[RMDB]
RNA sequence: GGGAACGACUCGAGUAGAGUCGAAAACGGCGGGAAGAUCGACCCGCGCAUCGUGUGCAUGGUCGACGUCGAGUCCGGCGCCGGCUCGUCGCAGGGCGCCAUCCCCAACCGGGACCACUCGGCCGAGAUCAACGACGAGAUCCGGCGAGUCCGUCAGGAGAAGCAUCUCUUUCGAGAGAUGCUUCUCAAAAGAAACAACAACAACAAC
Reactivity to 2A3 in 0.01 (KOAc 150mM, MgCl2 10mM, bicine 150mM(pH8.5), 24C), signal-to-noise 1, nucleotides 027 to 156: c050g000g000c010g020g040g000a060a050g000a200u040c000g000a000c000c010c000g000c000g000c000a170u160c230g180u220g000u020g090c080a170u120g010g010u000c000g000a000c020g020u020c040g000a050g070u110c080c140g010g000c040g000c000c000g020g010c020u030c090g280u090c160g000c070a060g080g030g000c030g010c040c000a070u130c000c020c010c000a000a080c060c000g000g000g040a040c050c040a030c080u000c050g000g130c050c020g180a230g010a050u070c030a030a110c030g220a030c080g030a050g000a090u030c000c010g010g000c000g010a000g040u000c000c050g040u020c020a040g000
The record gives the reactivity of an RNA of 207 nucleotides to 2A3.
For 2A3 the reverse transcriptase was SuperScript II with manganese.
The reactions ran in a buffer of 150 mM KOAc, 10 mM MgCl2 and 150 mM bicine (pH 8.5), at 24 C.
It was measured as part of the RMDB library OK3TST.
Reactivities are given for positions 27 through 156.